The record gives the reactivity of an RNA of 177 nucleotides to DMS and 2A3.
The data come from the RNA Mapping Database (RMDB), library OK1LIB.
Conditions: 150 mM KOAc, 10 mM MgCl2 and 150 mM bicine (pH 8.5), 24 C.
RNA sequence: GGGAACGACUCGAGUAGAGUCGAAAAAUCACAUGUCUUUGAAUCUAAUUCGACUGCGCUUCCAUCUGACUUGAAGCUUAUGUUUCCAAUGUCCUCUGGGUUAGUUAUGUAUUGGCCUUCAUAAUCACACUGCAUCAGGUUUCGACCUGAUGCAGUGAAAAGAAACAACAACAACAAC
Reactivity to DMS in 0.01 (KOAc 150mM, MgCl2 10mM, bicine 150mM(pH8.5), 24C), signal-to-noise 1, nucleotides 027 to 126: a040u010c110a080c010a020u050g000u010c020u000u000u010g000a020a040u040c030u000a060a140u000u000c040g000a130c040u000g000c010g000c000u020u050c000c030a090u040c040u000g010a010c030u020u020g000a050a060g000c090u000u020a030u050g010u000u000u000c020c020a060a080u000g000u000c030c020u000c060u000g000g050g000u020u000a040g000u000u070a060u040g020u020a140u010u000g000g000c060c010u000u040c010a090u000a030a060u000c150a170
Reactivity to 2A3 in 0.01 (KOAc 150mM, MgCl2 10mM, bicine 150mM(pH8.5), 24C), signal-to-noise 2, nucleotides 027 to 126: a010u170c060a060c050a150u070g030u050c070u110u150u030g010a060a020u150c030u030a080a140u100u020c030g020a030c040u120g010c040g000c000u020u020c030c030a070u010c050u130g110a130c040u040u080g030a010a030g040c040u090u140a080u090g080u000u020u050c010c010a030a080u090g010u060c000c010u030c040u050g040g000g050u000u000a060g000u000u080a220u270g070u000a060u080u120g000g010c020c050u090u120c070a070u100a240a020u110c050a020